Source information: An RNA of 207 nucleotides, treated with DMS and 2A3 and read out base by base. Values cover nucleotides 27 to 156. The reactions ran in a buffer of 150 mM KOAc, 10 mM MgCl2 and 150 mM bicine (pH 8.5), at 24 C. High DMS reactivity at an A or C suggests that its Watson-Crick edge is free. The DMS profile rests on 2,712 reads. It was measured as part of the RMDB library OK3TST.
RNA sequence: GGGAACGACUCGAGUAGAGUCGAAAAAAACAAUUAAAGUAUGGAAGCAGCGGACACAUGUUAUGCGGUUCUUCCAUGAAACAGAAGCGCCAAGGCCAAAGGAUUUCCUAUCCAAGUUCUAUGUUGGCCACGAUCCAUGAAGUCAUUCAGUGGAAAGGUUCCUAUUGUCUUUCGAGACAAUAGGAACAAAAGAAACAACAACAACAAC
Reactivity to DMS in 0.01 (KOAc 150mM, MgCl2 10mM, bicine 150mM(pH8.5), 24C), signal-to-noise 2, nucleotides 027 to 156: a050a020a040c020a090a080u000u010a050a040a180g020u000a050u000g010g000a050a020g080c060a200g020c050g010g000a150c050a150c060a080u000g000u000u010a070u010g040c030g020g010u000u000c020u000u000c010c010a040u010g000a090a060a110c070a080g010a030a080g030c010g030c020c040a090a110g010g020c000c010a060a050a040g000g000a090u020u000u000c000c040u010a170u010c090c040a060a050g030u000u000c030u000a120u020g010u000u010g000g020c010c010a150c120g000a100u010c010c020a060u020g000a070a050g040u000c140a090u000u000c030a120g040u010g010g010a080a130a160g010
Reactivity to 2A3 in 0.01 (KOAc 150mM, MgCl2 10mM, bicine 150mM(pH8.5), 24C), signal-to-noise 3, nucleotides 027 to 156: a000a000a000c150a100a070u300u200a150a040a080g070u100a010u090g000g010a050a000g030c100a000g040c020g050g050a010c020a030c010a110u250g040u170u150a050u220g060c050g040g000u040u030c000u000u030c000c000a020u080g070a000a050a030c060a030g110a070a020g070c050g010c080c120a080a050g010g000c000c010a020a080a000g010g000a000u010u100u080c020c050u050a070u070c000c030a070a040g050u020u020c020u080a090u230g090u040u020g020g000c030c000a030c030g010a010u000c010c000a010u050g060a050a010g070u070c000a080u180u000c040a030g050u010g010g050a050a040a030g100